This 177-nucleotide RNA was probed chemically with DMS. The reactions ran in a buffer of 150 mM KOAc, 10 mM MgCl2 and 150 mM bicine (pH 8.5), at 24 C. Source: RMDB library OK2TRN, as collected in RNAgym.
RNA sequence: GGGAACGACUCGAGUAGAGUCGAAAAACGAGCGCGCGCUGGAUCUAGAUGUAUAUAGUGAUCGUAUCGGUACGAGUCGGCCGGAUCUGAUAUGCACGGCCGCGGCGCGAUCAGGUACCGUACACAGAGUGGCUUACGUUUUCGAACGUAAGCCACUAAAAGAAACAACAACAACAAC
Reactivity to DMS in 0.01 (KOAc 150mM, MgCl2 10mM, bicine 150mM(pH8.5), 24C), signal-to-noise 1, nucleotides 027 to 126: a030c060g000a030g010c060g000c000g020c060g030c040u020g000g000a090u000c020u000a060g020a110u030g010u000a040u040a080u010a140g010u000g000a110u020c070g010u020a100u010c040g000g020u000a090c050g000a100g010u000c000g000g010c010c000g010g000a070u000c090u040g000a170u000a020u000g000c180a040c070g000g010c020c000g020c020g020g000c050g010c020g000a050u010c060a050g020g000u000a040c010c040g020u010a050c060a170c170a090g000